[RMDB]
RNA sequence: GGGAACGACUCGAGUAGAGUCGAAAAGCAUGAGUGUUAGGCAUGAGUACGGUCAAAGCCGCACCGGGCCACCCACCGGGCCAGGGAUAUCCCAUUGUUCUCUACUGUCAAUUUCGUUCUUUCGAACUCAUCAGUCCAGACACACAUCUGGAGAUUAUCCAUAUGUUAAGUUCGCUUAACAUAUGGAAAAAGAAACAACAACAACAAC
Reactivity to DMS in 0.01 (KOAc 150mM, MgCl2 10mM, bicine 150mM(pH8.5), 24C), signal-to-noise 3, nucleotides 027 to 156: g020c060a100u010g000a100g020u010g000u010u000a080g020g010c020a070u000g020a140g020u000a030c030g050g020u000c040a170a170a250g010c020c020g030c030a060c020c030g020g010g010c000c030a090c050c030c060a130c010c040g000g020g010c020c010a110g030g010g010a160u000a120u010c010c010c000a270u000u000g010u000u000c020u000c020u000a090c030u000g010u000c030a060a120u000u000u000c050g010u000u000c030u010u000u000c060g000a080a090c060u010c050a080u000c060a140g030u010c020c010a040g000a060c040a110c250a100c170a150u000c010u000g000g010a120g000a120u000u000a150
Reactivity to 2A3 in 0.01 (KOAc 150mM, MgCl2 10mM, bicine 150mM(pH8.5), 24C), signal-to-noise 5, nucleotides 027 to 156: g060c040a050u080g040a030g110u070g050u110u160a060g020g000c020a030u040g030a030g070u100a040c040g010g030u050c080a120a070a070g020c010c010g010c020a020c000c010g010g000g000c020c020a030c020c020c000a010c030c010g010g020g000c020c010a040g040g020g010a080u110a080u210c010c010c010a020u040u080g040u110u030c030u000c010u050a050c020u040g070u090c030a070a110u030u050u080c040g020u030u040c030u060u110u100c060g040a080a050c030u030c090a130u020c000a040g130u000c010c000a020g010a020c020a010c020a000c000a300u020c010u010g040g000a040g010a030u080u080a040